RNA sequence: GGGAACGACUCGAGUAGAGUCGAAAAUUAAGUAUGCGUAACUUCGAAAAGAUGACCAAACGUUCUAACCGUAAUGCUCGUGACUUCGAGGCAACCAAAGGUCGCAAGUUGAAUAAGACUAAGCGUGACCGCUCUCACAAGCGUAGCUGGGAGGGUCGCACUCUCAAUAAUUCGUUAUUGAGAGUGCAAAAGAAACAACAACAACAAC
Reactivity to DMS in 0.01 (KOAc 150mM, MgCl2 10mM, bicine 150mM(pH8.5), 24C), signal-to-noise 2, nucleotides 027 to 156: u020u000a090a110g000u020a040u000g020c010g010u000a060a050c020u020u040c040g010a090a120a070a130g020a150u010g010a120c020c020a040a090a070c020g030u020u000c130u000a090a110c130c040g030u000a060a070u000g000c050u000c010g050u010g010a060c090u000u000c060g000a040g010g020c030a070a110c040c030a040a060a120g050g010u000c010g000c030a090a070g020u000u000g020a100a160u000a140a140g000a070c020u000a000a080g000c030g020u000g010a050c050c020g060c040u000c000u000c000a040c030a050a060g000c040g000u000a110g000c090u000g010g000g010a050g000g020g020u000c080
Reactivity to 2A3 in 0.01 (KOAc 150mM, MgCl2 10mM, bicine 150mM(pH8.5), 24C), signal-to-noise 5, nucleotides 027 to 156: u120u020a080a010g090u060a080u110g060c030g020u020a030a020c020u060u050c090g040a050a090a060a080g050a080u110g040a040c020c030a130a040a030c070g010u080u060c070u160a080a110c060c020g050u080a090a070u110g060c010u030c030g040u050g060a090c030u040u010c070g010a020g050g010c030a020a070c020c030a060a040a000g030g000u030c010g000c030a030a050g030u040u010g130a120a050u210a100a030g020a010c060u030a050a060g020c020g060u030g010a000c000c010g150c080u000c000u010c000a040c040a070a090g090c070g180u140a050g000c110u030g000g000g010a010g020g010g000u020c010

The record gives the reactivity of an RNA of 207 nucleotides to DMS and 2A3. The RNA was probed in 150 mM KOAc, 10 mM MgCl2 and 150 mM bicine (pH 8.5) at 24 C. Values cover nucleotides 27 to 156.